[RMDB]
RNA sequence: GGGAACGACUCGAGUAGAGUCGAAAAGGUGUGAUCACGUCAUUACUCCUGAAUGACUUUUACAUCGCAACCGGCGCAAGUCGGCAUGAUACCGACCGCCCGGUCAUUCAUGAGGUUGAUCAAUUGCCACUAGGCACCUGUUCGCAGGUGCCUAGUGAAAAGAAACAACAACAACAAC
Reactivity to DMS in 0.01 (KOAc 150mM, MgCl2 10mM, bicine 150mM(pH8.5), 24C), signal-to-noise 2, nucleotides 027 to 126: g000g010u000g000u000g010a010u000c030a050c140g040u000c060a090u000u000a150c030u000c020c100u010g000a010a000u000g000a070c050u000u020u000u030a140c140a110u000c150g000c210a110a090c110c050g020g000c100g010c220a080a070g010u000c000g020g040c040a050u010g030a170u020a090c050c040g000a020c010c100g020c010c040c130g000g000u010c010a030u000u000c020a010u000g000a030g000g000u000u000g000a030u000c060a090a110u010u010g000c210
Reactivity to 2A3 in 0.01 (KOAc 150mM, MgCl2 10mM, bicine 150mM(pH8.5), 24C), signal-to-noise 2, nucleotides 027 to 126: g030g000u020g030u050g050a030u030c010a010c070g010u040c070a080u040u170a170c040u080c040c010u040g040a000a010u010g030a020c000u000u020u070u120a170c110a190u130c040g020c070a050a020c010c060g000g040c060g000c020a110a080g000u010c000g000g030c040a070u200g040a070u110a080c000c000g000a020c000c010g000c020c030c000g010g010u000c000a010u010u030c030a020u010g000a000g080g030u090u050g000a020u040c010a000a070u120u110g050c030